RNA sequence: GGGAACGACUCGAGUAGAGUCGAAAACUAGCGGAUUCGUCCGCUAGAAAAAAACCUUUGUGCCUACAAAGAGCAACAGCUGACUUCUCCCAUUGGGAGAACUCAGACAUGCUCAAAAAGGGCACUCUGGUAAAAAAGAAAGUGUUCGCACUUUCAAGUUUGUAAAAGUAUUCGUACUUUUACAAACAAAAGAAACAACAACAACAAC
Reactivity to 2A3 in 0.01 (KOAc 150mM, MgCl2 10mM, bicine 150mM(pH8.5), 24C), signal-to-noise 2, nucleotides 027 to 156: c000u000a000g010c000g010g020a040u050u090c140g070u020c050c000g000c010u000a000g040a010a060a000a000a000a000a000c020c000u020u010u000g020u000g000c000c020u110a110c100a160a180a020g000a000g010c000a010a110c040a160g050c000u010g000a020c010u010u000c000u000c000c020c110a300u230u300g020g000g000a010g000a000a000c000u000c000a030g040a080c010a040u020g000c000u020c000a000a100a000a050a000g000g000g000c000a000c000u000c000u000g010g000u040a040a070a040a090a110a030g000a010a000a030g000u010g050u110u230c240g030c120a000c000u010u020u040c020a030a030
Reactivity to DMS in 0.01 (KOAc 150mM, MgCl2 10mM, bicine 150mM(pH8.5), 24C), signal-to-noise 1, nucleotides 027 to 156: c000u000a020g000c030g010g010a120u000u000c290g040u000c000c010g050c000u010a010g010a000a000a070a070a180a100a040c010c000u000u000u000g010u030g040c000c000u010a120c140a220a280a300g040a010g000c010a090a030c130a210g000c110u000g020a000c000u000u010c000u020c000c000c000a300u000u000g020g000g000a030g010a000a000c000u000c000a050g000a000c090a300u010g040c010u000c000a000a050a080a180a300g010g000g020c000a010c000u000c010u000g000g030u000a000a000a100a090a080a090g000a030a000a050g020u000g020u000u000c300g100c030a050c030u020u010u010c010a120a300

Record summary
Chemical mapping of a 207-nucleotide RNA with 2A3 and DMS. The 2A3 profile rests on 1,851 reads. For DMS the reverse transcriptase was MarathonRT. The DMS profile rests on 1,527 reads.